[RMDB]
RNA sequence: GGGAACGACUCGAGUAGAGUCGAAAAAGGCGAUAUCUUUUCAGUUCGGAAUCGGUGAGCGAAGGGCAUCCGGACAAGAUCGCAGAUCAGGUGAGUGAUGCCGUGCUCGACGCAUGUCUCGCCCAGGCGGUUUUAAGAUAUUCGUAUCUUAAAACCGAAAAGAAACAACAACAACAAC
Reactivity to 2A3 in 0.01 (KOAc 150mM, MgCl2 10mM, bicine 150mM(pH8.5), 24C), signal-to-noise 9, nucleotides 027 to 126: a000g080g000c050g030a050u040a110u170c040u030u130u080u090c090a090g020u080u130c040g060g040a040a060u070c040g040g060u080g030a030g030c050g060a100a070g080g010g000c020a010u000c010c010g030g030a010c020a030a030g030a020u030c080g050c300a030g020a050u060c030a010g100g080u100g100a090g030u220g030a020u030g020c030c020g030u080g010c020u030c030g030a020c010g000c040a030u120g050u010c020u020c040g010c000c010c010a030g110g060
Reactivity to DMS in 0.01 (KOAc 150mM, MgCl2 10mM, bicine 150mM(pH8.5), 24C), signal-to-noise 9, nucleotides 027 to 126: a090g010g010c040g010a080u010a050u000c020u000u000u000u000c070a120g000u000u000c120g000g000a080a040u010c070g010g010u000g010a030g010c020g010a090a090g010g000g010c030a030u000c010c020g010g010a070c050a050a060g010a020u000c020g020c200a120g000a040u000c040a070g010g010u000g010a210g010u010g010a020u000g000c010c020g010u000g010c030u000c030g010a050c060g000c160a060u000g010u000c030u000c050g010c010c010c050a150g010g010
This 177-nucleotide RNA was probed chemically with 2A3 and DMS. Source: RMDB library OK2TRN, as collected in RNAgym. For 2A3 the reverse transcriptase was SuperScript II with manganese. For DMS the reverse transcriptase was MarathonRT. The reactions ran in a buffer of 150 mM KOAc, 10 mM MgCl2 and 150 mM bicine (pH 8.5), at 24 C.